[RMDB]
RNA sequence: GGGAACGACUCGAGUAGAGUCGAAAACGCGUAGUCGGACUCGUUGAGCGCGAUCGGGAUGGUGUUGAUGCCGAAGAAGUUCGUCGCCAUCAGCACGCCGUGGAGGGCGUGGUUGGCGCCCAGCUCGAAACUGUGUUAUGUUCGCAUAACACAGUUUAAAAGAAACAACAACAACAAC
Reactivity to 2A3 in 0.01 (KOAc 150mM, MgCl2 10mM, bicine 150mM(pH8.5), 24C), signal-to-noise 7, nucleotides 027 to 126: c040g010c020g090u160a020g030u060c020g010g020a030c020u000c030g070u060u190g010a010g000c020g000c010g020a020u040c020g000g000g140a180u200g180g010u010g000u010u030g010a010u020g020c050c030g010a020a010g060a080a030g230u160u130c040g030u040c040g040c050c000a010u010c000a000g010c000a000c030g030c000c000g010u050g040g090a170g020g000g020c020g000u020g020g160u050u060g030g000c000g010c000c000c000a020g000c010u010c010g030
Reactivity to DMS in 0.01 (KOAc 150mM, MgCl2 10mM, bicine 150mM(pH8.5), 24C), signal-to-noise 9, nucleotides 027 to 126: c050g010c050g010u000a040g010u000c020g010g000a280c020u000c020g020u010u010g010a030g030c020g030c060g010a070u000c020g000g000g010a080u010g020g020u000g010u000u000g000a040u000g010c220c010g010a040a040g010a130a130g010u000u000c060g010u000c040g010c230c010a010u000c010a040g010c010a010c010g000c010c010g000u000g000g010a210g020g000g010c010g030u000g000g010u000u000g010g000c000g010c010c000c010a130g000c020u000c030g000